RNA sequence: GGGAACGACUCGAGUAGAGUCGAAAAUCAAUCAUGUUCGCAUGAUUGAAAAGGUCAGGUGAGCAAACCACGACACGCGUCGAAGCGACCGAGCCCGGAGGCAAAGUGCAAUCUUCGGAUUGCACAAUCCUGUAGUGGGAUUCGUCCCACUACAGGAAAAAGAAACAACAACAACAAC
Reactivity to DMS in 0.01 (KOAc 150mM, MgCl2 10mM, bicine 150mM(pH8.5), 24C), signal-to-noise 3, nucleotides 027 to 126: u000c010a000a000u000c000a000u000g010u010u010c270g010c000a000u000g010a030u010u010g000a010a040a180a050g000g010u000c020a070g000g000u010g010a140g020c070a080a110a040c020c020a260c030g010a020c020a070c270g010c110g000u000c020g020a160a100g010c170g020a050c010c020g000a130g010c040c000c030g020g030a080g010g000c190a060a040a110g010u000g010c000a000a010u000c000u000u010c180g010g000a010u020u000g010c010a000c000a050a020
Reactivity to 2A3 in 0.01 (KOAc 150mM, MgCl2 10mM, bicine 150mM(pH8.5), 24C), signal-to-noise 1, nucleotides 027 to 126: u050c010a000a020u000c000a020u010g030u070u020c190g020c090a010u000g000a010u010u010g020a000a000a030a030g030g000u010c000a000g010g010u040g050a080g070c080a230a000a000c010c000a010c050g010a020c030a040c190g180c080g000u010c010g020a090a040g040c060g070a020c000c010g000a000g000c000c010c030g060g050a040g000g060c070a070a080a050g000u000g000c000a000a010u010c000u010u100c190g080g000a000u000u020g020c000a000c000a000a010